[RMDB]
RNA sequence: GGGAACGACUCGAGUAGAGUCGAAAACAGUAUUAGUUCGCUAAUACUGAAAAAGAUAUGGAACCGUUAAGCAGGCGAAGAACAUACUCUCGGAAACGAGAGGUAUGGGAGCCUGUACGGUUCCUAAGUCAAAAAGGCUCUUGUUCGCAAGAGCCAACAAACAAUAAUUGUUCGCAAUUAUUGUUUGAAAAGAAACAACAACAACAAC
Reactivity to 2A3 in 0.01 (KOAc 150mM, MgCl2 10mM, bicine 150mM(pH8.5), 24C), signal-to-noise 5, nucleotides 027 to 156: c000a000g000u000a000u000u010a010g030u040u060c190g000c130u000a000a000u000a000c000u000g040a070a010a000a010a010g010a000u010a000u020g000g000a000a010c020c010g010u080u180a230a050g040c000a010g030g000c020g130a300a110g020a260a000c000a000u000a010c000u000c000u000c010g000g010a000a000a000c000g000a000g000a000g020g030u020a000u000g010g000g040a110g020c000c000u000g000u010a000c000g000g000u000u000c000c000u000a000a000g000u000c010a010a040a040a080a090g000g000c000u000c000u010u030g040u100u120c290g010c100a000a000g000a000g000c000c000a000a000
Reactivity to DMS in 0.01 (KOAc 150mM, MgCl2 10mM, bicine 150mM(pH8.5), 24C), signal-to-noise 2, nucleotides 027 to 156: c000a010g010u000a010u000u000a000g010u010u000c300g030c000u000a000a020u000a010c000u000g000a000a080a100a140a130g000a070u000a080u010g000g000a010a020c000c010g020u010u010a080a180g030c020a020g030g010c000g050a120a160g000a050a110c000a010u000a030c000u000c000u000c000g000g000a060a040a100c000g000a020g010a030g000g010u000a000u000g000g010g030a150g020c020c010u000g030u000a020c010g000g000u000u000c000c000u000a010a070g000u000c010a050a030a100a150a110g020g010c000u000c000u000u010g010u010u000c300g020c020a030a020g000a030g000c000c010a000a010